[RMDB]
RNA sequence: GGGAACGACUCGAGUAGAGUCGAAAAUGACUGUGAUAACUCUGUAGGUAUUCGUUCGACAGAAGAUUAAUGAACAACCUAUUAUGAAAGCCCUAUCCCUAGUGAUUAGCCUAGUCGUGAUUAGCGUCUCAAGGGGAUAAUUCGUUAUCCCCUUGAGAAAAGAAACAACAACAACAAC
Reactivity to 2A3 in 0.01 (KOAc 150mM, MgCl2 10mM, bicine 150mM(pH8.5), 24C), signal-to-noise 6, nucleotides 027 to 126: u090g020a010c010u040g030u050g090a070u100a210a080c020u020c030u050g000u020a020g020g010u070a130u060u160c060g010u010u020c010g050a040c100a080g210a140a030g040a190u140u130a100a120u160g020a000a000c010a010a010c000c010u010a020u110u080a080u200g070a090a010a030g000c000c000c000u020a030u000c010c010c000u010a040g040u030g110a110u030u070a030g010c010c000u010a020g020u020c020g000u000g020a070u040u080a050g040c000g070u000
Reactivity to DMS in 0.01 (KOAc 150mM, MgCl2 10mM, bicine 150mM(pH8.5), 24C), signal-to-noise 4, nucleotides 027 to 126: u010g010a030c050u000g010u020g020a080u000a070a100c070u000c040u030g000u000a020g010g000u000a130u010u010c090g030u010u000c050g040a150c230a110g030a140a070g010a160u010u020a070a070u020g000a040a010c060a050a060c000c010u000a030u010u010a070u030g000a050a110a110g000c040c030c020u000a070u000c020c010c010u010a050g000u020g010a050u000u000a100g010c030c030u000a090g000u010c060g010u000g000a080u010u000a070g010c100g010u000

This 177-nucleotide RNA was probed chemically with 2A3 and DMS. 2A3 adducts were read by reverse transcription with SuperScript II with manganese. Values cover nucleotides 27 to 126.